[RMDB]
RNA sequence: GGGAACGACUCGAGUAGAGUCGAAAAUAGUGUCUACGUGCUGCCGCUUUGCGGCCAACGGCAUUUUGCUGUUGGAUGCUAAUUCGUUGGCAUCAGUAAUUGUGGCACUUUGUCACUCUUUCUUUAUCCUGACAGUCUGAUUCGUCAGACUGUCAGGAAAAGAAACAACAACAACAAC
Reactivity to 2A3 in 0.01 (KOAc 150mM, MgCl2 10mM, bicine 150mM(pH8.5), 24C), signal-to-noise 4, nucleotides 027 to 126: u200a000g000u000g000u010c060u080a000c010g010u000g000c010u010g020c000c010g040c160u110u090u300g000c000g000g000c000c000a000a000c000g000g030c050a060u130u180u140u300g000c000u000g000u010u010g010g000a010u010g010c000u000a040a030u110u120c220g080u160u040g030g000c000a000u010c010a010g000u040a100a100u110u300g000u000g000g020c000a000c000u050u000u010g040u000c040a030c090u020c000u010u010u000c020u010u080u010a280u060
Annotation:
The record gives the reactivity of an RNA of 177 nucleotides to 2A3. Conditions: 150 mM KOAc, 10 mM MgCl2 and 150 mM bicine (pH 8.5), 24 C. Reactivities are given for positions 27 through 126.